The data come from the RNA Mapping Database (RMDB), library 15KREP. The record gives the reactivity of an RNA of 177 nucleotides to 2A3.

[RMDB]
RNA sequence: GGGAACGACUCGAGUAGAGUCGAAAACAAACACAUCUUAGCCACUAUGUUCUUAACAUAGAUUGGUUGUGGUUUGCAUUUGAGACUGGUUUGGCAUACAUGCUCUAUACCUCGGCCUUCAACUGGUCCUAUUCGCCACGUUCGCGUGGCGAAUAGGAAAAGAAACAACAACAACAAC
Reactivity to 2A3 in 0.01 (KOAc 150mM, MgCl2 10mM, bicine 150mM(pH8.5), 24C), signal-to-noise 1, nucleotides 027 to 126: c010a000a020a010c000a000c000a090u010c100u050u050a010g010c000c000a000c000u000a000u010g050u040u140c120u180u250a040a000c000a000u030a080g060a110u050u120g040g000u030u060g000u050g010g060u030u050u060g010c070a050u120u020u030g070a050g000a000c040u010g050g000u010u030u130g030g010c010a000u060a130c040a060u180g000c000u000c020u130a090u110a130c000c060u050c050g000g000c000c000u090u050c050a030a000c050u010g030g000u010
Reactivities are given for positions 27 through 126.